[RMDB]
RNA sequence: GGGAACGACUCGAGUAGAGUCGAAAAGAUAUGGAGCCACCUCCCGUUCGCCAACAGACAUGCUCGAAGGGUCGGAAACGACCUUAAGAGCAACAGCUGUUGGCGAACGGGAGUUGGCUCCUAAGUCCAUUCAGAGUGAGUUCGCUCACUCUGAAUGAAAAGAAACAACAACAACAAC
Reactivity to DMS in 0.01 (KOAc 150mM, MgCl2 10mM, bicine 150mM(pH8.5), 24C), signal-to-noise 1, nucleotides 027 to 126: g000a120u000a300u000g010g000a020g000c000c000a000c060c000u000c000c000c030g000u000u000c000g000c000c000a010a010c000a010g000a050c140a250u000g000c000u000c000g020a300a120g000g000g040u000c000g000g000a080a110a260c010g010a050c000c000u000u000a010a300g000a020g010c010a000a040c300a180g000c000u000g010u000u010g010g030c000g000a000a000c010g020g010g000a020g010u000u000g000g010c060u010c000c000u000a000a060g020u000c050